[RMDB]
Source information:
This 207-nucleotide RNA was probed chemically with 2A3 and DMS. It was measured as part of the RMDB library OK3TST. The reactions ran in a buffer of 150 mM KOAc, 10 mM MgCl2 and 150 mM bicine (pH 8.5), at 24 C. 2A3 adducts were read by reverse transcription with SuperScript II with manganese. Values cover nucleotides 27 to 156. The 2A3 profile rests on 612 reads. DMS adducts were read by reverse transcription with MarathonRT.
RNA sequence: GGGAACGACUCGAGUAGAGUCGAAAAAUCGAGUGCAAUCUCUUGCAUCAUUUCCAAACCGGGAAUAGAGAUGUUGAUCAAUUGGAUCUCAGAAGUGUGUAAGAGUAAAUACCAUAGUCUUGUAAAUUGUGUCGAUAGUGGUAUUUUAUUCUUGUGGUCCGCAAAGAGAUUUCGAUCUCUUUGCGGAAAAAGAAACAACAACAACAAC
Reactivity to 2A3 in 0.01 (KOAc 150mM, MgCl2 10mM, bicine 150mM(pH8.5), 24C), signal-to-noise 2, nucleotides 027 to 156: a000u050c030g010a010g020u100g000c030a050a100u040c060u080c070u120u130g030c000a000u020c040a070u050u020u000c040c000a230a040a040c120c100g090g010g010a050a060u070a070g050a000g000a050u100g020u040u090g060a100u040c040a050a090u130u160g070g030a040u010c100u050c060a130g040a190a010g080u070g000u090g020u260a000a000g010a000g010u000a000a040a000u000a000c000c000a010u010a090g000u010c040u090u160g000u090a070a260a250u200u160g040u110g030u100c050g000a010u020a070g030u030g000g000u000a050u000u100u010u010a000u010u040c000u050u050g030u010g140g030
Reactivity to DMS in 0.01 (KOAc 150mM, MgCl2 10mM, bicine 150mM(pH8.5), 24C), signal-to-noise 1, nucleotides 027 to 156: a050u000c070g010a160g040u000g040c120a050a060u000c030u010c030u010u020g010c020a070u000c040a110u010u000u000c050c060a050a080a160c060c070g000g000g030a110a120u000a050g010a030g010a080u010g010u010u000g030a150u000c100a100a170u010u000g030g000a120u040c010u000c060a120g010a100a120g000u000g160u000g000u000a010a000g000a060g010u000a030a020a020u000a000c000c000a060u010a230g040u000c000u020u000g040u010a030a040a180u010u010g040u010g000u000c120g010a060u000a220g040u030g010g040u000a010u000u000u000u000a000u010u010c010u010u000g020u000g010g000